[RMDB]
Background:
Structure probing data (DMS and 2A3) for a 207-nucleotide construct. The 2A3 profile rests on 933 reads. High DMS reactivity at an A or C suggests that its Watson-Crick edge is free. 2A3 adducts were read by reverse transcription with SuperScript II with manganese. The DMS profile rests on 2,008 reads. For DMS the reverse transcriptase was MarathonRT.
RNA sequence: GGGAACGACUCGAGUAGAGUCGAAAACCUGGUUUAGGGUUCCAGGCUAUCCCUAUCUAUCGGUCGAGAUGCGAGCGCUUAAGCUCAAAUUGAGUGGCUGAGUUAGUGGUGAACGUAUCCCUAUGUUAAAACGGUAGCUGCUUCGGCAGCUACCGAACGUAGGACCUAUGUUCGCAUAGGUCCUACGAAAAGAAACAACAACAACAAC
Reactivity to DMS in 0.01 (KOAc 150mM, MgCl2 10mM, bicine 150mM(pH8.5), 24C), signal-to-noise 2, nucleotides 027 to 156: c020c020u000g010g000u010u010u010a090g020g010g040u010u010c000c000a030g010g020c000u000a110u000c040c000c010u000a050u010c020u000a100u000c000g020g070u000c000g020a300g030a050u000g030c300g020a060g080c020g000c300u000u000a110a250g030c010u000c000a040a270a060u020u000g020a190g060u000g000g000c020u010g000a040g000u000u000a100g050u010g020g010u000g010a080a070c000g040u000a090u010c010c010c010u020a120u030g000u010u000a100a060a080a120c060g000g050u000a040g000c000u000g020c010u000u000c220g040g000c010a010g010c000u000a000c010c000g000a000a010
Reactivity to 2A3 in 0.01 (KOAc 150mM, MgCl2 10mM, bicine 150mM(pH8.5), 24C), signal-to-noise 2, nucleotides 027 to 156: c000c000u010g030g000u050u040u020a020g000g020g000u020u010c000c020a010g030g000c000u050a050u100c000c000c010u000a050u030c020u030a050u010c000g050g000u010c030g030a010g000a110u040g020c010g020a000g000c070g010c240u280u270a160a060g000c000u010c030a000a020a010u010u030g000a020g040u180g040g020c000u000g030a020g030u060u030a040g010u090g190g010u100g070a130a040c080g040u090a100u070c000c000c000u020a070u060g130u060u170a090a100a050a060c000g010g000u000a000g000c000u000g000c000u030u090c190g070g000c000a000g000c000u000a000c000c000g000a000a000